[RMDB]
RNA sequence: GGGAACGACUCGAGUAGAGUCGAAAAUUCUGAGCCCCAGUGAGCAGGUAACAACAGACGGGGACCAGUGACAUCAAUUCACCUGAGGCCCAAGGCUGGUUCAAGUGCCUGGAACCAAGAUGUUUGUUGAUUGAACAAGAAAAUGCUGAGGCUUAGACAUUAGCGCUAAUUUCGAUUAGCGCUAAUGAAAAGAAACAACAACAACAAC
Reactivity to 2A3 in 0.01 (KOAc 150mM, MgCl2 10mM, bicine 150mM(pH8.5), 24C), signal-to-noise 3, nucleotides 027 to 156: u050u010c000u000g010a000g000c000c000c000c000a000g010u010g060a050g080c040a020g000g060u090a050a010c010a000a000c000a010g020a020c020g010g000g000g040a010c000c010a010g010u020g070a050c020a120u170c070a120a190u150u060c010a040c020c030u090g060a100g120g020c010c040c030a070a060g130g000c050u020g040g040u090u080c110a150a060g010u010g030c000c010u000g000g010a000a020c020c000a070a050g080a170u210g050u030u030u060g060u030u010g100a280u040u070g010a060a060c040a100a050g110a100a130a030a020u170g000c000u000g000a000g000g000c020u000u000a000g000a000
Reactivity to DMS in 0.01 (KOAc 150mM, MgCl2 10mM, bicine 150mM(pH8.5), 24C), signal-to-noise 2, nucleotides 027 to 156: u020u010c010u000g010a000g070c000c000c010c000a050g020u000g010a200g050c000a060g010g000u000a090a130c040a030a060c040a060g050a030c010g040g020g010g050a060c000c030a090g040u000g020a090c120a190u010c150a110a230u000u000c040a030c010c080u000g010a190g000g000c020c000c050a100a080g030g030c000u000g010g030u000u000c160a070a140g020u000g050c030c010u020g020g010a100a130c070c030a100a180g020a180u000g010u000u020u010g010u010u020g030a190u000u010g010a070a140c050a060a110g000a090a080a100a100u000g040c020u000g010a040g010g000c000u000u000a030g010a140